[RMDB]
RNA sequence: GGGAACGACUCGAGUAGAGUCGAAAAGAUAUGGAAUCGAACUACAACCGAUGCAGCGACGAAGUCGGAAACGACAGAGCUGCUAAGGUUGCGAUUCCUAAGUCAAACGAUCAGUUCGCUGAUCGAAUCGUUUACCAAGCUUCGGCUUGGUAAACGAAAAAGAAACAACAACAACAAC
Reactivity to DMS in 0.01 (KOAc 150mM, MgCl2 10mM, bicine 150mM(pH8.5), 24C), signal-to-noise 1, nucleotides 027 to 126: g020a020u050a300u000g010g000a000a010u000c000g000a140a080c080u020a270c000a000a020c000c000g000a120u000g000c010a000g000c000g000a060c180g000a050a060g000u010c000g020g000a030a050a190c000g000a000c020a070g000a200g030c000u020g010c030u000a040a060g000g000u000u000g000c000g000a000u000u000c000c030u000a010a070g040u010c010a030a050a300c050g000a000u000c000a030g020u000u020c180g010c000u000g010a010u020c000g000a050a100
Reactivity to 2A3 in 0.01 (KOAc 150mM, MgCl2 10mM, bicine 150mM(pH8.5), 24C), signal-to-noise 1, nucleotides 027 to 126: g030a010u070a030u140g000g000a020a010u020c020g000a070a080c090u250a140c300a000a000c000c010g020a040u280g000c000a000g100c020g300a300c080g080a270a040g000u020c000g090g000a050a030a060c030g000a000c000a000g150a020g000c000u000g040c000u010a020a030g030g000u000u000g000c000g000a000u000u010c000c000u000a100a000g030u050c000a270a000a000c020g000a030u010c030a010g050u040u160c210g020c080u000g010a000u050c010g000a000a130